RNA sequence: GGGAACGACUCGAGUAGAGUCGAAAAGAUAUGGACCGACCCAGCAAGCUGGGUCGGAAACGAUUAGUGAUGACCUGGGCGGUCCUAAGUCCGAGCAGUAGUCGAACAUUCGUGUUCGACUACUGAAGGAUAUUUGUUAAUUCGUUAACAAAUAUCCAAAAGAAACAACAACAACAAC
Reactivity to DMS in 0.01 (KOAc 150mM, MgCl2 10mM, bicine 150mM(pH8.5), 24C), signal-to-noise 8, nucleotides 027 to 126: g000a080u000a180u010g000g000a040c000c000g010a230c000c000c000a010g010c070a080a170g010c020u000g020g030g020u000c000g010g000a010a040a100c010g020a020u000u000a030g010u000g010a100u010g010a080c300c000u000g000g000g020c010g000g000u000c000c010u000a060a110g000u000c000c020g010a180g010c010a000g010u000a010g000u000c010g000a010a010c000a040u000u010c210g020u000g010u000u000c000g010a000c000u000a000c000u000g000a030a090
Reactivity to 2A3 in 0.01 (KOAc 150mM, MgCl2 10mM, bicine 150mM(pH8.5), 24C), signal-to-noise 6, nucleotides 027 to 126: g020a030u120a050u200g000g010a010c010c000g300a300c040c000c000a000g030c050a180a090g000c010u300g170g010g170u000c000g000g010a030a010a000c000g000a010u020u060a030g050u030g210a300u130g040a110c010c010u000g000g000g000c000g000g000u010c000c000u010a070a020g030u000c020c020g020a050g030c010a000g000u000a000g000u010c000g010a010a000c000a020u060u150c300g100u080g000u010u000c020g000a000c000u000a000c000u000g000a010a000